An RNA of 177 nucleotides, treated with DMS and 2A3 and read out base by base. Reactivities are given for positions 27 through 126. For 2A3 the reverse transcriptase was SuperScript II with manganese. The RNA was probed in 150 mM KOAc, 10 mM MgCl2 and 150 mM bicine (pH 8.5) at 24 C. The DMS profile rests on 18,654 reads.
RNA sequence: GGGAACGACUCGAGUAGAGUCGAAAAGAUAUGGACGGAUACGCUUGAUGACCACACAACAAUGUCGGAAACGACUAUGUGUGCAAGAGCCUAUCCGUCCUAAGUCAAAGUGCCCUUCGGGGCACAAGUAACGUACUUAGUUCGCUAAGUACGUUACAAAAGAAACAACAACAACAAC
Reactivity to DMS in 0.01 (KOAc 150mM, MgCl2 10mM, bicine 150mM(pH8.5), 24C), signal-to-noise 8, nucleotides 027 to 126: g000a010u000a010u010g000g000a010c000g000g000a010u000a010c300g010c000u000u000g010a060u000g010a060c300c010a010c000a000c010a090a230c300a120a060u010g020u000c000g010g000a010a000a010c000g010a010c000u000a070u010g010u000g010u000g000c000a020a020g010a000g010c000c080u000a000u000c000c000g000u000c000c000u000a000a040g000u000c000a060a100a110g000u000g000c000c000c000u000u010c180g020g010g010g010c000a000c000a010a070
Reactivity to 2A3 in 0.01 (KOAc 150mM, MgCl2 10mM, bicine 150mM(pH8.5), 24C), signal-to-noise 9, nucleotides 027 to 126: g010a000u010a000u050g000g000a000c000g010g000a000u000a010c040g020c010u110u020g020a150u030g010a300c010c010a000c010a000c010a050a060c050a160a270u300g010u010c000g000g020a010a010a000c010g070a000c020u070a140u100g010u000g000u000g000c010a300a300g000a000g000c000c000u000a000u000c000c000g000u000c000c000u000a000a000g000u000c000a000a010a040g000u000g000c010c000c000u000u050c290g070g000g000g000c000a000c000a000a010